[RMDB]
RNA sequence: GGGAACGACUCGAGUAGAGUCGAAAAGAUAUGGAUAUCCUGCACUGGCUAUAAUCAGGACUCGGAAACGAGUCCUGGUAGCCAAACAGGAGUAUCCUAAGUCAAAACCCGGCCUUCGGGCCGGGAAGAUGUUUAUUCAGUUCGCUGAAUAAACAUCAAAAGAAACAACAACAACAAC
Reactivity to DMS in 0.01 (KOAc 150mM, MgCl2 10mM, bicine 150mM(pH8.5), 24C), signal-to-noise 3, nucleotides 027 to 126: g020a080u010a300u000g010g000a050u010a010u000c000c000u000g010c170a170c300u000g000g010c010u010a070u010a300a100u010c010a000g010g000a030c000u020c000g000g000a080a110a200c020g000a010g000u000c000c000u000g000g000u020a020g000c010c010a020a140a290c010a020g000g010a050g010u000a000u010c000c000u000a050a200g010u000c030a160a090a170a220c000c000c010g000g000c000c000u000u020c260g060g010g080c030c010g040g000g010a010a010
Reactivity to 2A3 in 0.01 (KOAc 150mM, MgCl2 10mM, bicine 150mM(pH8.5), 24C), signal-to-noise 2, nucleotides 027 to 126: g020a020u140a030u200g020g000a000u010a000u030c000c000u020g000c120a070c270u030g000g000c000u030a050u080a300a300u300c000a010g000g030a000c000u010c020g020g020a060a090a100c010g000a000g000u020c020c000u000g000g000u010a000g010c000c000a010a000a020c000a020g030g020a040g040u030a000u000c010c000u000a140a030g070u030c020a010a040a190a300c000c010c040g020g010c000c040u110u140c290g170g010g040c000c050g000g030g010a000a000